[RMDB]
RNA sequence: GGGAACGACUCGAGUAGAGUCGAAAAACGGUCGUACGCGACUGAGGCGCGGCUAGGUCGACGGACCGAACAAUGGCAUCCCGCAUUCUGCCAUCCGCCGCGCAGCUUCUUCUCAAACGGUGCGGAAAAAAGUAGGACACCUUCGGGUGUCCUACAACCCUCUAUUCUGCUUCGGCAGAAUAGAGGGAAAAGAAACAACAACAACAAC
Reactivity to 2A3 in 0.01 (KOAc 150mM, MgCl2 10mM, bicine 150mM(pH8.5), 24C), signal-to-noise 1, nucleotides 027 to 156: a000c000g010g000u010c000g020u060a050c210g000c050g130a010c020u040g000a080g040g020c000g010c000g000g000c000u000a000g000g000u000c000g060a200c210g150g030a000c000c020g000a030a000c000a000a010u000g010g000c000a000u130c010c020c000g000c000a040u300u040c000u020g000c000c000a000u000c020c020g020c000c000g010c000g000c000a000g010c000u130u100c010u030u030c040u000c010a060a090a080c070g030g050u020g020c020g000g000a020a030a030a030a030a030g000u010a000g010g000a010c020a000c020c000u030u080c180g020g010g010u010g000u010c000c000u010a000c010a000a000
Source: RMDB library M2RFPK, as collected in RNAgym.
Structure probing data (2A3) for a 207-nucleotide construct.
2A3 adducts were read by reverse transcription with SuperScript II with manganese.
For 2A3, 991 sequencing reads were counted.